[RMDB]
RNA sequence: GGGAACGACUCGAGUAGAGUCGAAAAGAGAACUGGCUAUUCCAUUUUUAGGUAUAUAUGGAGCUUGUUCUACAAUGGCAGAAGGUCUUUGUAUAGGUUCUAUGCUUAUAGAUGGUGGUUUUGCUGACGAUAAAUAGGCGUUCGCGCCUAUUUAUCGAAAAGAAACAACAACAACAAC
Reactivity to 2A3 in 0.01 (KOAc 150mM, MgCl2 10mM, bicine 150mM(pH8.5), 24C), signal-to-noise 7, nucleotides 027 to 126: g130a000g000a030a030c050u060g030g000c050u110a150u210u130c000c000a000u030u020u040u090u140a110g040g110u090a120u040a030u000a020u220g010g010a000g010c020u040u040g050u090u010c010u010a030c020a020a150u100g010g000c030a020g060a210a050g230g010u030c010u010u040u030g090u060a070u100a090g000g030u040u050c020u060a030u080g020c000u060u050a060u070a060g040a030u050g000g030u020g000g080u010u020u090u130g070c040u040g040a030
Reactivity to DMS in 0.01 (KOAc 150mM, MgCl2 10mM, bicine 150mM(pH8.5), 24C), signal-to-noise 2, nucleotides 027 to 126: g000a020g000a040a060c000u000g000g000c030u020a160u050u030c000c000a030u000u000u000u020u000a080g000g000u040a070u020a050u020a020u000g010g010a030g010c010u010u010g020u010u010c040u010a030c050a030a060u010g030g000c010a090g010a130a080g020g000u000c030u020u000u020g000u010a040u010a040g000g020u010u000c070u030a090u030g010c000u000u000a070u030a040g000a030u030g010g000u020g010g010u030u000u000u000g000c040u000g020a300